An RNA of 207 nucleotides, treated with 2A3 and read out base by base. It was measured as part of the RMDB library OK3TST. Reactivities are rounded to 0.1 and cut off at 0 and 3.
RNA sequence: GGGAACGACUCGAGUAGAGUCGAAAAAGAGUUUGAUAUUCUCCUAUCUUAACCACUGAGUAUAGUUUCUCUCAUCCAUUCAUUCUUUACCCAUUCAUUGAGUUUUUAUUCGGUGCAGCAUAGUAGGCCAAGCUGUACCUGCUAUGAAGCUGAAACACCCCCAUCUGUAAUUCGUUACAGAUGGGGGAAAAGAAACAACAACAACAAC
Reactivity to 2A3 in 0.01 (KOAc 150mM, MgCl2 10mM, bicine 150mM(pH8.5), 24C), signal-to-noise 2, nucleotides 027 to 156: a000g110a020g020u100u110u080g090a070u090a060u160u040c030u020c000c010u050a080u070c060u100u100a090a040c040c000a060c110u040g020a010g020u100a110u070a150g060u060u110u030c030u010c000u020c010a050u030c070c020a040u070u070c010a040u120u030c060u010u050u090a040c020c000c000a050u040u040c030a050u040u060g090a080g050u080u000u010u030u100a090u010u040c030g020g010u040g000c040a020g050c000a000u000a010g020u000a000g060g030c040c070a090a020g020c020u020g000u040a090c000c000u000g000c000u000a020u050g020a040a040g020c040u070g050a060a020a000c020a040